[RMDB]
RNA sequence: GGGAACGACUCGAGUAGAGUCGAAAAGUCUUUUGCUUGUUUACUUCUCUGGUGCUUUAAAUAACUGCACGAGAGAGCGUACCAGCCUUGAGCAAUGUUUGGGAUUGGCUGAGCUGAGGCACAGGCCUACUGGCACAUGAUUCGUCAUGUGCCAGUAAAAAGAAACAACAACAACAAC
Reactivity to DMS in 0.01 (KOAc 150mM, MgCl2 10mM, bicine 150mM(pH8.5), 24C), signal-to-noise 3, nucleotides 027 to 126: g010u000c020u000u000u000u010g010c020u000u000g020u020u010u000a040c020u000u000c000u010c010u000g000g030u000g000c000u000u000u010a090a110a140u010a080a110c210u010g010c000a020c010g000a020g000a020g000a010g000c170g020u000a050c150c040a020g010c020c030u000u000g000a300g010c020a050a040u010g020u000u020u000g020g000g000a180u000u000g020g020c010u000g000a130g000c030u000g000a050g000g010c050a090c140a090g000g000c010c100
Reactivity to 2A3 in 0.01 (KOAc 150mM, MgCl2 10mM, bicine 150mM(pH8.5), 24C), signal-to-noise 2, nucleotides 027 to 126: g020u000c020u000u130u170u120g020c020u070u080g040u230u170u050a040c000u050u060c010u020c010u090g160g010u010g030c020u070u080u230a160a300a140u220a150a100c070u060g020c010a000c140g010a000g000a000g000a000g000c090g010u010a020c040c000a020g020c000c010u010u030g020a020g000c020a040a070u230g270u150u090u070g240g000g010a020u050u040g010g050c010u000g000a020g000c010u030g020a070g020g060c040a030c060a110g040g140c000c010